[RMDB]
RNA sequence: GGGAACGACUCGAGUAGAGUCGAAAAUUGGUAUGUAGUACAUCGGGGGCCGUAACCUCGUUACAGUAAUAACGACAGUGCUACGCUACACAGCGCCCAAACAGGUGCAAAAGUUUUGGGUAAACAACACCAUACACGACUUCGGUCGUGUAUGGUGAAAAGAAACAACAACAACAAC
Reactivity to 2A3 in 0.01 (KOAc 150mM, MgCl2 10mM, bicine 150mM(pH8.5), 24C), signal-to-noise 2, nucleotides 027 to 126: u070u120g030g000u070a060u160g000u000a030g000u000a000c050a030u010c080g000g000g000g020g000c070c180g100u050a050a000c000c000u070c000g170u160u000a000c020a010g120u080a000a060u000a210a070c110g060a000c070a050g020u010g000c000u000a000c050g010c100u070a010c100a000c020a100g020c100g010c010c000c040a010a060a000c030a000g140g000u300g000c010a030a120a190a000g000u020u110u110u000g040g020g000u150a080a020a000c030a000a000
Reactivity to DMS in 0.01 (KOAc 150mM, MgCl2 10mM, bicine 150mM(pH8.5), 24C), signal-to-noise 2, nucleotides 027 to 126: u030u040g020g040u000a020u020g000u010a010g060u000a050c000a110u000c010g000g000g000g000g000c120c020g000u000a060a010c000c040u000c120g020u000u020a020c300a130g000u000a030a120u020a000a000c000g000a090c070a110g000u010g090c040u000a000c000g000c110u000a030c080a090c040a120g020c060g050c000c000c020a050a020a010c180a110g000g000u000g010c160a140a010a160a060g000u000u010u000u010g000g000g000u000a080a050a030c170a080a120

Overview
An RNA of 177 nucleotides, treated with 2A3 and DMS and read out base by base. The 2A3 profile rests on 643 reads. DMS adducts were read by reverse transcription with MarathonRT. The RNA was probed in 150 mM KOAc, 10 mM MgCl2 and 150 mM bicine (pH 8.5) at 24 C.